[RMDB]
RNA sequence: GGGAACGACUCGAGUAGAGUCGAAAAGAUAUGGAAGAGCGAGGAUCUGGCUUCACGUUGAAAUCGGAAACGAUGGAGUGAAACCAGGGAGCUCUUCCUAAGUCAAACUCCACCUUCGGGUGGAGAAGGUUAGAACUUAGUUCGCUAAGUUCUAACCAAAAGAAACAACAACAACAAC
Reactivity to DMS in 0.01 (KOAc 150mM, MgCl2 10mM, bicine 150mM(pH8.5), 24C), signal-to-noise 3, nucleotides 027 to 126: g010a030u000a300u000g000g000a030a030g010a010g010c000g020a070g010g000a050u020c000u010g000g000c020u020u000c000a000c010g000u010u020g010a080a120a020u010c010g000g000a110a080a140c020g020a020u000g000g010a090g000u000g000a010a020a010c000c000a010g000g000g000a020g010c000u000c000u000u000c000c000u000a020a060g010u010c020a090a120a180c010u000c000c000a000c000c010u000u020c220g020g010g020u000g000g000a000g000a010a020
Reactivity to 2A3 in 0.01 (KOAc 150mM, MgCl2 10mM, bicine 150mM(pH8.5), 24C), signal-to-noise 3, nucleotides 027 to 126: g010a010u080a030u150g010g000a010a000g000a000g020c020g020a270g030g000a020u010c000u000g010g000c020u000u000c000a020c050g200u300u080g000a030a030a000u000c010g010g010a040a050a030c010g010a010u010g030g000a030g000u000g010a010a000a000c000c000a000g000g000g000a000g000c000u000c000u000u000c000c000u000a000a000g010u000c010a040a000a100c010u000c000c010a000c010c010u050u090c300g160g000g000u000g000g010a000g000a010a020
Overview
The record gives the reactivity of an RNA of 177 nucleotides to DMS and 2A3. The reactions ran in a buffer of 150 mM KOAc, 10 mM MgCl2 and 150 mM bicine (pH 8.5), at 24 C.